The record gives the reactivity of an RNA of 207 nucleotides to 2A3 and DMS. For DMS, 3,929 sequencing reads were counted. Reactivities are given for positions 27 through 156. It was measured as part of the RMDB library RNAMAK. 2A3 adducts were read by reverse transcription with SuperScript II with manganese. The RNA was probed in 150 mM KOAc, 10 mM MgCl2 and 150 mM bicine (pH 8.5) at 24 C.
[RMDB]
RNA sequence: GGGAACGACUCGAGUAGAGUCGAAAACGCUGGGAGAACUGCGUCUCCCCACCAAUCUGAAGCGCGCACGGAUUGAGGACGAACUACACUUCUCCUGUGCUGAAGCGCGCACGGCAACCGAAAGGUGCGAAAACGGUUUGGGUUCGCCCAAACCGAAGCAUUAUAUGUCUUUCGAGACAUAUAAUGCAAAAGAAACAACAACAACAAC
Reactivity to 2A3 in 0.01 (KOAc 150mM, MgCl2 10mM, bicine 150mM(pH8.5), 24C), signal-to-noise 7, nucleotides 027 to 156: c030g010c060u130g010g050g020a110g020a150a100c110u200g030c080g050u000c030u020c020c020c000c000a030c000c020a010a030u020c020u090g080a250a030g000c000g000c000g000c000a010c030g020g020a020u040u060g050a060g020g050a020c090g040a110a040c070u240a060c240a050c130u070u020c010u010c010c010u050g020u080g070c040u050g030a150a050g000c000g000c000g000c000a010c010g070g010c030a090a110c030c010g060a090a050a020g010g000u030g020c030g030a060a050a040a090c010g000g020u010u000u000g030g000g010u040u060c190g130c010c000c000a030a000a000c000c000g000a030a010
Reactivity to DMS in 0.01 (KOAc 150mM, MgCl2 10mM, bicine 150mM(pH8.5), 24C), signal-to-noise 2, nucleotides 027 to 156: c110g040c080u000g040g010g020a050g050a040a120c050u010g000c120g020u000c080u010c130c000c010c020a090c110c020a080a070u010c030u000g000a060a120g020c010g030c000g000c020a300c010g000g010a000u000u010g020a070g000g000a130c090g000a090a150c040u010a070c100a070c090u000u000c000u000c030c020u000g070u010g040c040u000g000a070a110g020c010g000c030g020c000a110c060g000g020c020a140a140c030c030g000a110a100a170g000g020u000g020c010g000a050a110a100a210c000g010g010u000u010u000g020g040g030u000u000c300g000c040c020c000a000a010a020c000c000g010a020a140